[RMDB]
RNA sequence: GGGAACGACUCGAGUAGAGUCGAAAACCUAGAGCUAAGUCUGUUGUCUCAAGGAUUGGAGACUCCAUCUUUACAGGCUGUACUGGCUCUUGGAACAAGGUCACUCAAAUUGCUAACAUGUUCUUGGGAAGCGGGAUGUUCGCAUCCCGCAAAAGAAACAACAACAACAAC
Reactivity to 2A3 in 0.01 (KOAc 150mM, MgCl2 10mM, bicine 150mM(pH8.5), 24C), signal-to-noise 4, nucleotides 027 to 129: c000c000u010a020g010a000g000c000u110a040a010g030u040c040u020g020u060u080g060u030c000u030c080a080a100g080g030a110u150u220g050g010a070g040a060c040u040c040c010a090u030c030u070u160u030a040c000a000g030g000c000u000g040u090a100c100u050g010g000c000u000c000u030u060g010g000a020a000c010a070a040g070g020u070c050a030c060u070c010a030a040a280u140u130g030c010u040a000a040c000a070u100g020u030u000c000u040u030g050g000g010a120a020
Reactivity to DMS in 0.01 (KOAc 150mM, MgCl2 10mM, bicine 150mM(pH8.5), 24C), signal-to-noise 3, nucleotides 027 to 129: c000c040u000a010g000a090g020c060u020a050a040g020u010c080u000g040u020u030g030u060c110u010c000a240a050g080g000a090u010u080g000g000a100g030a140c110u000c050c040a040u030c020u000u040u000a070c130a130g020g040c030u000g000u090a090c170u030g000g060c070u020c030u020u000g030g040a070a030c130a040a050g050g030u000c090a060c120u020c040a110a180a110u010u000g000c050u000a040a030c200a060u050g030u000u000c040u020u060g090g030g000a120a080
Overview
Chemical mapping of a 170-nucleotide RNA with 2A3 and DMS. DMS adducts were read by reverse transcription with MarathonRT.